[RMDB]
Chemical mapping of a 207-nucleotide RNA with DMS and 2A3. 2A3 is a SHAPE reagent: it acylates the 2'-hydroxyl of flexible nucleotides of all four kinds. For 2A3 the reverse transcriptase was SuperScript II with manganese. The DMS profile rests on 12,357 reads. For DMS the reverse transcriptase was MarathonRT. Conditions: 150 mM KOAc, 10 mM MgCl2 and 150 mM bicine (pH 8.5), 24 C.
RNA sequence: GGGAACGACUCGAGUAGAGUCGAAAACGUCAUUCGUGACGAAUAAAUCCUAAGUCACGCAGAUGUAGGAGGGUGGUGGUAGUCGGAAACGACUAUAAUCACCACCUCCCCACCCUACAUACCUGCGUGAUAUGGAGUGGUCCUAAUUCGUUAGGAAAGAAGAGAAUAAGUUCGCUUAUUCUCUUCUAAAAGAAACAACAACAACAAC
Reactivity to DMS in 0.01 (KOAc 150mM, MgCl2 10mM, bicine 150mM(pH8.5), 24C), signal-to-noise 4, nucleotides 027 to 156: c020g010u010c020a090u010u010c270g030u000g020a030c020g010a100a090u010a100a090a100u000c000c010u000a100a260g020u000c000a010c010g000c010a030g010a060u000g020u000a030g020g000a190g020g000g030u000g000g040u000g020g050u010a030g010u000c000g010g000a180a120a300c000g020a020c000u000a060u010a100a060u000c060a050c000c000a010c000c000u000c050c010c000c050a200c200c020c020u000a050c010a040u000a030c130c010u000g000c050g020u000g010a010u000a080u000g000g000a090g040u000g010g000u000c010c010u000a030a110u000u010c190g030u000u000a030g010g010a080a190
Reactivity to 2A3 in 0.01 (KOAc 150mM, MgCl2 10mM, bicine 150mM(pH8.5), 24C), signal-to-noise 5, nucleotides 027 to 156: c000g010u010c010a040u090u130c210g150u060g000a010c010g010a020a010u250a110a170a040u040c010c000u030a110a050g020u000c000a000c000g010c000a010g010a030u010g000u010a000g010g000a010g010g020g000u020g000g010u000g020g000u020a020g000u010c010g000g070a100a080a070c020g010a000c000u030a020u160a160a070u130c070a010c010c000a000c000c000u010c000c000c000c000a110c010c000c010u000a000c000a020u060a130c020c000u000g000c000g000u000g000a000u000a010u060g010g010a040g020u140g040g070u030c000c000u020a070a070u100u090c140g060u100u100a040g030g090a040a060